[RMDB]
RNA sequence: GGGAACGACUCGAGUAGAGUCGAAAAUGAAAGAGCGUCGCAAACACACAGACUAAGUCUCACACUGACUGACGCUAAACCGCUCUGUCAGUGUGGGAGAUAUCGGUAUUAAUGAGAGCGGAAAAAACUAUGAGUUAAAGUUCGCUUUAACUCAUAGAAAAGAAACAACAACAACAAC
Reactivity to 2A3 in 0.01 (KOAc 150mM, MgCl2 10mM, bicine 150mM(pH8.5), 24C), signal-to-noise 5, nucleotides 027 to 126: u160g020a040a040a050g050a010g020c010g000u010c010g020c050a010a150a020c060a010c020a010c030a070g120a090c080u150a190a080g100u000c000u000c000a000c000a000c000u000g000a000c000u020g000a000c020g000c010u020a060a030a020c010c000g010c010u000c000u010g010u010c000a000g000u010g000u000g010g000g000a000g010a000u120a020u060c030g010g020u070a050u170u150a170a100u100g010a000g000a000g000c000g020g000a110a050a000a000a000a000
Reactivity to DMS in 0.01 (KOAc 150mM, MgCl2 10mM, bicine 150mM(pH8.5), 24C), signal-to-noise 8, nucleotides 027 to 126: u010g010a080a100a080g010a190g010c010g020u000c010g010c050a070a090a120c170a070c110a050c120a080g010a070c130u010a080a120g010u000c000u010c000a000c000a000c000u000g000a010c000u010g010a020c040g020c020u000a030a100a130c060c020g000c010u000c000u000g010u000c000a010g010u010g030u000g000g000g000a010g000a070u000a050u000c060g010g010u000a050u000u010a070a100u010g010a020g010a040g010c010g010g010a010a050a060a080a060a090